[RMDB]
Structure probing data (DMS and 2A3) for a 207-nucleotide construct. The data come from the RNA Mapping Database (RMDB), library RNAMAK. For 2A3, 5,044 sequencing reads were counted.

RNA sequence: GGGAACGACUCGAGUAGAGUCGAAAAGGGGUCACAUCCGAUGAAAGCGUUUGUCAGCGAUACACUGAAGCCUCCACGGUGUAUUCGCUUGGAUUUAACGCUGGAGGAUGUGACGGAGGCACCCAAACGUGAGGGAUUGUUCGCAAUCCCUCACGAACUUGUAAUAACCCUUCGGGGUUAUUACAAGAAAAGAAACAACAACAACAAC
Reactivity to DMS in 0.01 (KOAc 150mM, MgCl2 10mM, bicine 150mM(pH8.5), 24C), signal-to-noise 2, nucleotides 027 to 156: g000g010g030g020u010c000a020c010a030u000c000c010g020a170u010g000a200a090a090g010c000g010u000u000u010g020u010c050a060g020c010g020a050u000a010c000a030c000u000g000a030a090g020c030c000u000c020c020a300c040g010g000u000g000u000a000u010u000c020g060c010u000u010g020g000a040u010u000u000a010a040c000g040c000u010g000g010a110g040g010a040u000g020u000g000a020c020g000g010a040g080g060c000a130c000c010c020a090a130a160c000g020u010g010a060g000g000g010a040u010u000g030u010u000c300g040c050a030a020u000c000c010c020u000c000a000c000g000a000a070
Reactivity to 2A3 in 0.01 (KOAc 150mM, MgCl2 10mM, bicine 150mM(pH8.5), 24C), signal-to-noise 4, nucleotides 027 to 156: g060g010g050g010u000c000a000c000a000u010c000c000g160a260u050g040a030a010a030g000c010g010u010u030u030g090u090c140a040g010c000g010a000u000a000c010a000c000u030g030a110a020g010c000c000u000c010c000a010c020g020g000u000g000u020a040u110u230c020g000c000u020u160g080g010a020u200u150u150a000a000c000g010c010u000g000g020a020g000g000a000u000g000u000g010a000c000g000g000a000g000g010c000a020c000c010c010a060a110a010c010g000u000g000a010g000g000g000a000u010u010g020u070u130c230g000c130a000a010u000c010c000c010u000c000a020c000g000a010a000
The reactions ran in a buffer of 150 mM KOAc, 10 mM MgCl2 and 150 mM bicine (pH 8.5), at 24 C.